Notes
The record gives the reactivity of an RNA of 177 nucleotides to DMS and 2A3. The 2A3 profile rests on 1,617 reads. As a SHAPE reagent, 2A3 marks flexible, mostly unpaired nucleotides at the ribose 2'-OH. Values cover nucleotides 27 to 126. The RNA was probed in 150 mM KOAc, 10 mM MgCl2 and 150 mM bicine (pH 8.5) at 24 C. Source: RMDB library RFM100, as collected in RNAgym.
RNA sequence: GGGAACGACUCGAGUAGAGUCGAAAAGGGGGCAACGGAAGUCCAUCUCGUCGUCUCAACCGGGAUUGAUCACGAUUGGUUCCACUCUGUCAAUCGUAGUUAUCUAAAAUAGUGAUUGCCCCACAGCCAGCGCUUGACAAUUCGUUGUCAAGCGCUGAAAAGAAACAACAACAACAAC
Reactivity to DMS in 0.01 (KOAc 150mM, MgCl2 10mM, bicine 150mM(pH8.5), 24C), signal-to-noise 1, nucleotides 027 to 126: g000g020g000g040g020c030a130a110c070g000g000a060a080g000u000c050c040a080u000c000u030c000g000u000c030g010u000c030u010c030a260a120c290c020g000g000g000a000u000u000g000a050u000c030a130c130g000a010u000u000g000g020u010u050c050c010a030c090u040c130u020g020u000c000a000a040u000c090g010u000a010g000u000u050a080u030c060u040a100a100a030a040u000a030g000u050g000a150u020u000g010c000c000c000c000a010c150a110g000c250
Reactivity to 2A3 in 0.01 (KOAc 150mM, MgCl2 10mM, bicine 150mM(pH8.5), 24C), signal-to-noise 3, nucleotides 027 to 126: g090g010g010g010g000c020a020a010c030g060g060a060a030g030u040c000c000a020u040c000u000c000g060u010c030g080u050c020u050c100a110a030c080c010g000g020g030a040u010u020g010a000u040c060a000c020g020a020u030u030g090g010u140u030c080c000a090c030u110c060u090g000u020c010a000a000u020c000g020u030a050g080u070u130a040u070c060u090a010a090a070a080u130a070g090u100g050a160u060u000g000c000c000c010c000a040c010a010g050c040